Source: RMDB library OK1LIB, as collected in RNAgym. Chemical mapping of a 177-nucleotide RNA with DMS and 2A3. For DMS the reverse transcriptase was MarathonRT. Reactivities are given for positions 27 through 126.
RNA sequence: GGGAACGACUCGAGUAGAGUCGAAAAGAAGGGAAAGGAGACCCAUGGACAGUCUCCAGAGGUUCCUAAGGCCUCGCUCGCGCCUGCCGGGAGGCAGAAUGUCCCGGUUGUCCAUGAAAGAAGAAGAGCGUAUGAGCCUAUUCGUAGGCUCAUACGCAAAAGAAACAACAACAACAAC
Reactivity to DMS in 0.01 (KOAc 150mM, MgCl2 10mM, bicine 150mM(pH8.5), 24C), signal-to-noise 1, nucleotides 027 to 126: g100a240a120g010g010g010a070a100a040g010g000a000g000a000c000c250c100a060u000g000g010a080c010a070g010u000c000u000c000c000a150g020a040g000g010u000u030c000c090u090a120a120g000g030c000c070u000c000g000c160u040c120g000c180g080c010c010u000g000c010c000g000g070g000a000g060g000c100a060g010a080a110u060g000u000c000c000c000g050g000u000u000g000u000c000c000a000u000g000a030a070a050g000a300a050g000a010a180g000a160
Reactivity to 2A3 in 0.01 (KOAc 150mM, MgCl2 10mM, bicine 150mM(pH8.5), 24C), signal-to-noise 2, nucleotides 027 to 126: g030a050a040g100g020g020a150a200a020g020g000a010g000a000c000c000c030a010u000g000g000a000c000a000g020u000c020u000c000c060a000g030a000g010g020u060u210c070c050u080a060a060g120g000c010c020u030c010g000c020u090c040g090c020g010c000c000u000g000c010c000g000g000g000a020g000g020c000a010g130a120a050u190g060u040c000c000c000g000g020u000u020g020u040c000c000a000u030g040a060a090a040g070a020a000g060a020a020g050a010
For 2A3, 1,213 sequencing reads were counted.